[RMDB]
RNA sequence: GGGAACGACUCGAGUAGAGUCGAAAACAUGCAGUAGAUGACUCUCCAGCUCAUGGAGGAAGGAGUGGGGGGAUGCCUCUCCUGCUGGGGUUGGGCACAUGUGGUCCAGCAGACACAGAGCCAUUUGGUGUCCUUAGACCUUUCUGUUCUAGAUGGGCAGUGUUACAGAGUUCGCUCUGUAACACUGAAAAGAAACAACAACAACAAC
Reactivity to DMS in 0.01 (KOAc 150mM, MgCl2 10mM, bicine 150mM(pH8.5), 24C), signal-to-noise 2, nucleotides 027 to 156: c060a090u010g010c070a030g040u000a030g000a090u010g010a080c020u000c000u010c010c020a130g020c090u000c030a110u000g020g010a040g020g010a080a070g000g000a040g060u000g000g000g030g020g000g020a090u010g030c020c010u000c020u000c040c020u000g000c080u000g000g020g000g020u000u000g030g020g000c050a090c060a100u010g020u020g010g070u020c010c000a040g000c030a180g020a190c080a080c050a100g000a110g020c050c010a080u000u000u000g010g030u000g020u020c010c020u010u020a100g020a080c020c010u000u000u000c040u000g000u000u000c040u000a040g000a140u000g000g000g020
Reactivity to 2A3 in 0.01 (KOAc 150mM, MgCl2 10mM, bicine 150mM(pH8.5), 24C), signal-to-noise 4, nucleotides 027 to 156: c060a030u150g000c040a010g010u090a020g020a150u110g060a090c020u020c000u000c060c020a040g020c040u060c110a120u080g040g060a040g040g060a120a030g020g020a040g010u180g010g020g000g010g010g020a010u090g010c010c000u040c000u020c010c030u020g020c030u030g010g020g010g030u070u030g050g010g000c010a030c020a050u120g030u060g060g000u000c020c010a020g000c030a020g040a040c030a010c000a100g060a020g070c020c010a040u060u050u070g070g000u020g000u000c000c000u050u070a060g030a060c000c020u010u070u000c050u040g100u110u050c050u090a030g010a080u040g000g030g000